Chemical mapping of a 177-nucleotide RNA with DMS and 2A3.
2A3 adducts were read by reverse transcription with SuperScript II with manganese.
The reactions ran in a buffer of 150 mM KOAc, 10 mM MgCl2 and 150 mM bicine (pH 8.5), at 24 C.
The 2A3 profile rests on 951 reads.
RNA sequence: GGGAACGACUCGAGUAGAGUCGAAAAGGCUCGUCGUCGACGAAGGGUCUAGAAGCCUGGGCGCUGGCUGGAGCGCGCGGCUGUGAGUAAUCGCUCCUUUGGAAAAGAAAACCAGCGGCGAUACUCGGUUUACCGUAUGGUUCGCCAUACGGUAAACAAAAGAAACAACAACAACAAC
Reactivity to DMS in 0.01 (KOAc 150mM, MgCl2 10mM, bicine 150mM(pH8.5), 24C), signal-to-noise 2, nucleotides 027 to 126: g000g010c050u000c020g020u010c070g010u000c150g020a120c060g020a080a080g040g010g010u000c020u000a110g020a200a110g020c020c000u000g070g010g020c030g030c010u010g030g000c060u000g000g010a180g000c000g000c040g000c080g000g000c020u010g000u030g000a010g000u010a090a050u000c010g030c000u000c080c050u000u010u000g000g000a080a020a110a220g000a110a120a160a070c000c000a020g000c300g000g010c000g000a040u010a040c000u000c010g000
Reactivity to 2A3 in 0.01 (KOAc 150mM, MgCl2 10mM, bicine 150mM(pH8.5), 24C), signal-to-noise 1, nucleotides 027 to 126: g000g000c010u020c030g030u000c010g100u090c040g060a180c060g040a090a050g070g000g000u000c010u020a050g110a160a000g100c080c130u250g070g080g000c020g010c000u040g160g000c090u070g060g090a000g000c040g010c000g010c000g000g000c010u040g050u050g090a000g000u050a220a160u000c010g000c010u090c010c020u030u200u100g020g020a180a100a080a080g050a090a140a100a060c010c000a010g010c060g020g000c000g000a030u000a030c010u020c030g000